[RMDB]
RNA sequence: GGGAACGACUCGAGUAGAGUCGAAAAGCAAACAGUUUACGUCAAACACCACAUUCAAAUGAUACACUGAAAUGAAUCCUUCGUCGUUGAUUUUCAACUGUUUUUCAAUAAUGUUUGACAAACGGUCGACGUUUACAUUUUGCAAGUAGAGUCCGUAGAAUGAUAGUGAGUUCGCUCACUAUCAUUCAAAAGAAACAACAACAACAAC
Reactivity to 2A3 in 0.01 (KOAc 150mM, MgCl2 10mM, bicine 150mM(pH8.5), 24C), signal-to-noise 8, nucleotides 027 to 156: g030c030a020a010a030c040a060g000u020u040u040a020c020g000u000c020a050a100a060c050a060c050c040a040c030a080u060u080c050a050a070a070u100g020a020u070a070c040a020c080u050g030a050a000a090u080g040a060a060u080c030c040u130u140c110g120u040c040g040u080u060g040a060u030u040u050u110c060a110a100c050u040g040u020u070u000u030u040c030a040a020u160a120a110u160g060u060u050u040g050a050c030a040a080a010c070g020g020u040c060g000a010c010g010u020u020u030a020c030a070u040u060u030u040g010c030a070a050g020u060a040g080a040g090u030c030c030g000u020a040
Reactivity to DMS in 0.01 (KOAc 150mM, MgCl2 10mM, bicine 150mM(pH8.5), 24C), signal-to-noise 4, nucleotides 027 to 156: g040c020a070a040a060c040a160g030u010u000u000a050c080g030u020c020a110a060a070c050a120c050c020a090c130a130u000u000c080a060a120a120u010g000a110u000a020c040a090c050u000g000a050a070a050u000g010a210a130u000c020c050u010u000c140g010u010c060g030u000u000g040a180u020u010u020u000c020a030a070c010u000g010u000u000u010u000u010c020a040a070u010a110a090u000g010u000u000u030g010a100c040a060a050a050c070g020g010u000c070g010a040c050g020u010u000u000a030c050a250u000u000u010u000g000c020a040a080g040u000a110g020a190g000u000c010c020g010u000a250
An RNA of 207 nucleotides, treated with 2A3 and DMS and read out base by base. The reactions ran in a buffer of 150 mM KOAc, 10 mM MgCl2 and 150 mM bicine (pH 8.5), at 24 C. The DMS profile rests on 7,154 reads. For DMS the reverse transcriptase was MarathonRT.